[RMDB]
RNA sequence: GGGAACGACUCGAGUAGAGUCGAAAAGUCUAGCGAAAGGAUCCCACCCGGGAGACACGCAAGUCGCGAAUUAGGCCGACCGGCCAAGGUCAAUCGCAGAACUCAACUGCAUGAGUAAGCUAGACGACAUGGGACUAUUAUUCGUAAUAGUCCCAUGAAAAGAAACAACAACAACAAC
Reactivity to 2A3 in 0.01 (KOAc 150mM, MgCl2 10mM, bicine 150mM(pH8.5), 24C), signal-to-noise 3, nucleotides 027 to 126: g000u000c000u000a010g000c010g070a100a060a020g130g010a040u010c000c000c010a030c020c030c000g000g040g000a050g000a020c050a020c050g030c060a090a070g200u180c050g010c010g040a090a190u160u060a210g060g000c030c020g030a090c030c020g020g020c010c030a020a010g020g000u030c020a020a070u060c070g000c020a030g040a140a090c040u050c150a070a140c060u080g010c030a070u110g020a020g080u020a030a030g000c000u000a000g000a000c000g000a000
Reactivity to DMS in 0.01 (KOAc 150mM, MgCl2 10mM, bicine 150mM(pH8.5), 24C), signal-to-noise 9, nucleotides 027 to 126: g010u000c000u000a000g010c000g010a110a150a150g010g000a070u010c000c010c010a170c300c040c060g000g000g000a140g000a080c030a100c040g010c050a090a130g020u010c170g010c020g000a120a060u000u010a110g000g010c010c000g010a110c070c090g000g010c020c030a100a110g000g010u010c020a060a100u000c070g000c030a040g000a050a080c090u000c130a090a130c060u000g010c040a110u010g010a100g010u000a090a180g010c000u000a010g000a010c000g000a190